[RMDB]
RNA sequence: GGGAACGACUCGAGUAGAGUCGAAAAACGGAUUACGAUCCGAAGAUGGGUGAAACAUGAUGAGUGUACAAAAUCUUGAUUAAAAAAUGAAAACUUAUAAGAUCCAACUCUGAUUUCAUCCAGAAAAGGUCAAUACCCUUUUCGAAGGGUAUUGACCAAAAGAAACAACAACAACAAC
Reactivity to 2A3 in 0.01 (KOAc 150mM, MgCl2 10mM, bicine 150mM(pH8.5), 24C), signal-to-noise 1, nucleotides 027 to 126: a000c010g000g010a000u050u050a190c300g000a010u060c000c000g050a010a000g030a000u070g000g040g000u000g000a000a010a010c070a130u080g000a050u060g010a050g050u020g040u140a090c050a030a140a000a000u130c110u160u200g090a150u120u250a180a150a000a150a110a000u080g170a240a150a000a000c010u200u180a110u010a200a010g000a000u020c040c050a000a000c010u000c020u030g040a100u000u000u010c000a030u000c000c000a000g170a000a010a000a000